Chemical mapping of a 207-nucleotide RNA with 2A3.
RNA sequence: GGGAACGACUCGAGUAGAGUCGAAAAUGCGCACUGGGAAGAGUUGUAGCCCCGUCUCCUGUGUGGCUGUGAACGAUCGCAAUCGUGGUUGAGUCUGCGUCAUCCUCAAUACAUGCGUAUUGCACUGCGUCCAUCAUGAAAUGAUUCUCAGGAUCGCGUGCCGCUUAGGAUUCGUCCUAAGCGGCACAAAAGAAACAACAACAACAAC
Reactivity to 2A3 in 0.01 (KOAc 150mM, MgCl2 10mM, bicine 150mM(pH8.5), 24C), signal-to-noise 1, nucleotides 027 to 156: u140g020c020g000c050a020c000u020g000g000g030a050a070g060a100g080u030u200g030u080a070g010c020c000c000c000g060u040c000u050c000c050u030g030u010g030u050g100g020c030u000g010u050g060a100a010c080g100a110u240c060g000c070a070a070u100c060g010u030g000g000u010u030g010a020g020u080c080u150g000c040g200u110c010a090u130c000c020u000c010a000a030u090a070c030a030u180g050c010g040u150a040u000u000g070c010a010c050u100g010c000g000u010c000c030a120u080c000a050u120g100a140a000a000u120g060a020u090u050c030u060c110a040g140g000a150u100c070g000c020
Conditions: 150 mM KOAc, 10 mM MgCl2 and 150 mM bicine (pH 8.5), 24 C.
2A3 adducts were read by reverse transcription with SuperScript II with manganese.